[RMDB]
RNA sequence: GGGAACGACUCGAGUAGAGUCGAAAAGGAUAAUCUGCAACAUCUACAACCUUCUUUUGACGUAAUUCGUCAAAUGAUGGUGGUUGAUGGUGACGACUUGUUGCACUUACGUCUUCAUCUUCACCAAAUCGUAAUCGCAAUUCGUUGCGAUUACGAUAAAAGAAACAACAACAACAAC
Reactivity to 2A3 in 0.01 (KOAc 150mM, MgCl2 10mM, bicine 150mM(pH8.5), 24C), signal-to-noise 5, nucleotides 027 to 126: g070g000a060u040a090a070u090c030u090g020c010a040a000c000a050u000c010u100a050c030a070a040c000c000u000u020c000u020u030u000u000g000a010c010g080u160a260a260u300u280c010g000u010c000a000a000a010u050g000a020u020g020g030u020g000g010u010u030g010a040u030g000g050u020g040a030c070g040a050c020u060u090g060u050u080g030c040a040c080u070u110a040c100g060u010c000u060u060c020a090u030c010u050u020c030a070c060c000a060a090
Reactivity to DMS in 0.01 (KOAc 150mM, MgCl2 10mM, bicine 150mM(pH8.5), 24C), signal-to-noise 2, nucleotides 027 to 126: g080g000a110u000a180a000u010c100u000g000c000a070a060c000a060u050c050u020a090c140a000a010c010c000u000u030c000u000u030u000u000g000a000c010g050u040a240a140u040u030c000g040u000c000a000a000a000u000g000a010u000g050g020u010g000g010u000u000g020a070u000g000g000u020g030a120c040g000a070c160u000u000g000u000u000g020c060a020c190u000u040a020c160g000u060c010u000u000c090a110u000c090u000u050c030a070c040c080a040a110